[RMDB]
RNA sequence: GGGAACGACUCGAGUAGAGUCGAAAAAGAUCCACGGUACGGCGUGGAUCACACGUUCAUCCCUAUUGGGACGGAAGUAGGCAUAGUGCCGAAGGAACGCAUUAGUCAUGCGCUACGGCGCAUGACACACAUCAGAGUCACUUCGGUGACUCUGAAAGGUACUUUGUUGCUUCGGCAACAAAGUACCAAAAGAAACAACAACAACAAC
Reactivity to 2A3 in 0.01 (KOAc 150mM, MgCl2 10mM, bicine 150mM(pH8.5), 24C), signal-to-noise 2, nucleotides 027 to 156: a000g000a000u020c000c000a000c020g050g010u260a100c080g050g080c000g080u000g000g010a000u000c000a000c000a000c000g010u010u000c020a040u070c020c000c000u140a280u120u300g010g000g000a000c040g020g000a050a020g020u010a030g030g000c020a100u090a210g090u110g140c000c020g000a000a010g010g000a020a030c040g010c130a060u120u140a070g010u000c010a000u010g000c000g040c000u010a090c220g050g030c010g000c010a000u000g000a000c000a000c000a000c010a080u050c000a000g000a000g000u030c000a000c010u040u050c170g070g010u000g000a000c000u010c000u020g000a000a000a010